Structure probing data (2A3) for a 177-nucleotide construct.
Conditions: 150 mM KOAc, 10 mM MgCl2 and 150 mM bicine (pH 8.5), 24 C.
Values are in units of 0.01, from 0 to 300, in steps of 10.
Reactivities are given for positions 27 through 126.
Source: RMDB library RFM100, as collected in RNAgym.
RNA sequence: GGGAACGACUCGAGUAGAGUCGAAAAUGAGCUCCUUUCUGUCAACCAGUGACAGAUUAUGGAUUCGCACGAGAAGAAGAGAAAGUUCACAGAACUAGCACUUAAUCUUCUGUUUUUGCAGGAGAUCUUUCUCGGCAGCUUUCGAGCUGCCGAGAAAAAAAGAAACAACAACAACAAC
Reactivity to 2A3 in 0.01 (KOAc 150mM, MgCl2 10mM, bicine 150mM(pH8.5), 24C), signal-to-noise 1, nucleotides 027 to 126: u130g000a010g090c040u000c000c000u030u000u000c080u000g000u000c040a140a110c120c100a280g130u000g060a000c000a000g040a040u000u000a080u000g000g000a000u000u080c000g040c010a020c030g020a030g000a030a010g040a010a010g010a000g020a130a120a000g030u060u060c120a130c110a280g000a020a020c030u010a010g130c040a000c000u040u170a040a000u000c000u000u000c000u000g080u000u070u230u000u300g000c000a000g000g030a010g000a000u010c000